[RMDB]
RNA sequence: GGGAACGACUCGAGUAGAGUCGAAAAAGGAGAGCAGUUAAAUGUGUCUGGUAUGACUCGCAAGGCUAAGAAGGGCAAGCGUAAGAAACAGAAGGCUGGACUUAAUCGGUCUAUCUUGUCUGUAGGGGAUAUGAAAAGAUUUCGAUCUUUUCAUAUCAAAAGAAACAACAACAACAAC
Reactivity to DMS in 0.01 (KOAc 150mM, MgCl2 10mM, bicine 150mM(pH8.5), 24C), signal-to-noise 9, nucleotides 027 to 126: a070g010g000a080g010a110g020c030a030g010u000u000a050a080a080u010g020u000g010u000c020u000g010g010u000a070u010g000a080c060u000c070g010c080a050a080g000g010c050u000a060a070g010a100a120g000g000g010c050a040a090g010c120g010u010a070a080g000a110a090a040c020a020g000a060a030g000g000c040u000g000g010a020c020u000u000a090a100u010c280g010g000u000c010u000a010u000c010u000u000g000u000c010u000g010u000a110g010g000g010
Reactivity to 2A3 in 0.01 (KOAc 150mM, MgCl2 10mM, bicine 150mM(pH8.5), 24C), signal-to-noise 8, nucleotides 027 to 126: a000g080g010a040g000a020g000c040a020g030u100u140a050a120a110u150g050u040g040u040c020u030g000g050u130a090u200g050a050c000u010c010g020c040a020a060g030g000c020u060a060a030g050a040a050g070g010g000c030a040a020g010c010g050u070a070a050g050a120a150a010c010a000g020a020a010g040g000c020u020g010g010a010c000u090u100a100a070u210c070g010g000u000c010u000a020u000c010u040u080g180u030c020u010g020u040a050g040g050g050